[RMDB]
RNA sequence: GGGAACGACUCGAGUAGAGUCGAAAACAUGAACUGCUCUUUCCCUGGCAGUUAUGAAACUUAUUCAGCCAUCUGUAGUGCUAAACAGCGCAUACAGAAUGCGCUCAGGGACAAGUAUGGGUACGGCUGAGUGUUCACCAUUCGUGGUGAACACUCAAAAAGAAACAACAACAACAAC
Reactivity to DMS in 0.01 (KOAc 150mM, MgCl2 10mM, bicine 150mM(pH8.5), 24C), signal-to-noise 2, nucleotides 027 to 126: c120a090u000g010a020a020c000u000g000c010u000c130u000u000u000c000c010c000u010g020g010c010a000g000u020u000a050u000g000a060a120a060c130u000u000a070u020u010c070a070g010c010c010a060u000c000u010g000u010a030g040u000g010c000u000a070a070a120c170a070g000c050g020c020a110u000a050c040a000g000a050a090u020g010c090g000c000u000c060a090g000g010g010a020c300a070a100g010u000a050u010g000g030g020u020a070c090g020g010c120
Reactivity to 2A3 in 0.01 (KOAc 150mM, MgCl2 10mM, bicine 150mM(pH8.5), 24C), signal-to-noise 1, nucleotides 027 to 126: c070a030u150g100a000a030c000u000g000c000u010c000u080u090u010c010c000c000u010g000g000c000a000g000u000u020a040u090g070a020a050a000c040u140u060a100u180u180c050a000g030c000c010a020u040c010u020g010u020a040g100u030g040c010u030a000a220a150c070a040g020c020g000c000a030u000a020c010a020g070a020a050u020g020c080g020c030u050c030a040g070g000g000a020c020a100a000g110u090a100u220g040g000g050u090a030c020g050g020c070